[RMDB]
RNA sequence: GGGAACGACUCGAGUAGAGUCGAAAAGAUAUGGAAUGACUGGACAUGAAGUGUCAUCGGAAACGAUGACCUUCAACAGCCAGCAUUCCUAAGUCAAAAGGCUCGUCUGGUUCGCCAGACGAGCCAACUACUAGUAAAGCUUCGGCUUUACUAGUAGAAAAGAAACAACAACAACAAC
Reactivity to 2A3 in 0.01 (KOAc 150mM, MgCl2 10mM, bicine 150mM(pH8.5), 24C), signal-to-noise 2, nucleotides 027 to 126: g000a040u040a030u120g010g060a020a010u030g220a300c000u010g000g020a050c070a300u300g010a020a000g080u130g000u300c000a010u010c000g010g000a040a020a000c000g020a000u000g010a000c010c000u000u020c000a030a010c010a000g010c010c010a010g000c000a000u000u000c010c010u000a020a000g010u010c020a000a020a100a220g020g020c010u000c040g070u000c010u010g000g100u130u170c300g060c140c040a000g000a020c000g000a000g000c000c000a000a000
Reactivity to DMS in 0.01 (KOAc 150mM, MgCl2 10mM, bicine 150mM(pH8.5), 24C), signal-to-noise 3, nucleotides 027 to 126: g000a040u000a210u020g000g000a020a010u010g000a190c010u000g000g000a040c090a270u010g000a020a010g010u010g000u000c000a010u000c000g010g000a080a060a110c000g020a010u000g000a000c010c000u000u000c000a070a120c250a230g000c000c000a010g000c000a010u000u000c000c000u000a010a070g000u030c040a090a140a140a150g020g010c000u000c000g000u000c010u010g010g000u000u020c200g030c000c000a020g000a010c000g030a010g000c000c000a000a020